[RMDB]
RNA sequence: GGGAACGACUCGAGUAGAGUCGAAAAGACGUUUGAUUCUCGCCUAGCGAGUUCUUCGAACGAGUCGAUCCCGAAUGAGCGCCUACAUCGGGCUCCUGGGGUGAUCCAGAGACUAGACGGAGGCGACGUCUCGCGGGGCUGGCCUUCAGACAUAGUCGAACAUAUAAAGGUUCGCCUUUAUAUGUUCAAAAGAAACAACAACAACAAC
Reactivity to DMS in 0.01 (KOAc 150mM, MgCl2 10mM, bicine 150mM(pH8.5), 24C), signal-to-noise 2, nucleotides 027 to 156: g010a100c000g030u000u000u010g020a110u000u000c060u000c000g030c010c060u000a130g030c020g010a050g020u000u000c050u000u010c010g020a080a170c020g010a060g020u010c000g000a110u000c000c010c000g010a070a070u000g000a100g000c010g010c050c000u000a060c070a050u000c050g010g010g000c000u000c020c020u000g000g020g000g040u020g000a170u000c010c020a080g010a100g020a050c020u000a070g050a090c000g010g000a120g020g010c010g020a070c090g010u000c010u000c080g010c040g010g030g020g040c010u010g050g020c040c040u000u000c010a070g000a090c040a130u010a060g000u020c050
Reactivity to 2A3 in 0.01 (KOAc 150mM, MgCl2 10mM, bicine 150mM(pH8.5), 24C), signal-to-noise 5, nucleotides 027 to 156: g010a010c020g010u050u120u150g060a080u180u060c010u010c020g010c050c240u100a050g030c010g010a020g000u090u060c050u040u050c030g040a060a030c010g000a000g020u000c000g010a030u010c000c000c010g000a040a100u100g010a020g010c070g190c070c030u120a190c090a240u150c120g030g020g000c020u050c020c010u060g060g010g020g020u090g070a060u060c010c000a000g020a010g010a080c010u010a020g010a040c040g010g000a000g010g000c020g010a030c030g010u000c010u010c020g040c120g000g030g020g010c060u120g080g000c000c000u010u010c020a020g010a030c050a080u060a020g030u030c060

Chemical mapping of a 207-nucleotide RNA with DMS and 2A3.
For 2A3, 3,874 sequencing reads were counted.
For DMS, 4,140 sequencing reads were counted.
Source: RMDB library RSTRND, as collected in RNAgym.